[RMDB]
RNA sequence: GGGAACGACUCGAGUAGAGUCGAAAAGCGCGCUCGCGUACGCAACUCAGACUUGUGCACGGCAUGCAUGCGCGCAACACCGCCACGACAGCAGCACAACCAUCACCACUCAUUCUGAGAAAGUCGCCGCCGUAAAUGCGUUCGCGCAUUUACGGCGAAAAGAAACAACAACAACAAC
Reactivity to 2A3 in 0.01 (KOAc 150mM, MgCl2 10mM, bicine 150mM(pH8.5), 24C), signal-to-noise 2, nucleotides 027 to 126: g010c010g000c000g010c020u030c110g040c000g060u010a010c040g060c030a000a080c010u010c070a030g030a150c020u110u070g030u040g020c050a000c030g060g050c090a020u170g020c020a040u210g000c010g000c000g020c000a000a000c040a010c000c020g000c020c020a070c010g060a030c060a000g010c000a010g040c010a030c000a090a030c010c000a030u040c000a010c020c000a000c030u040c000a150u130u020c120u070g020a040g040a160a020a050g000u020c030g010c020

The record gives the reactivity of an RNA of 177 nucleotides to 2A3. The reactions ran in a buffer of 150 mM KOAc, 10 mM MgCl2 and 150 mM bicine (pH 8.5), at 24 C. For 2A3 the reverse transcriptase was SuperScript II with manganese. Values cover nucleotides 27 to 126.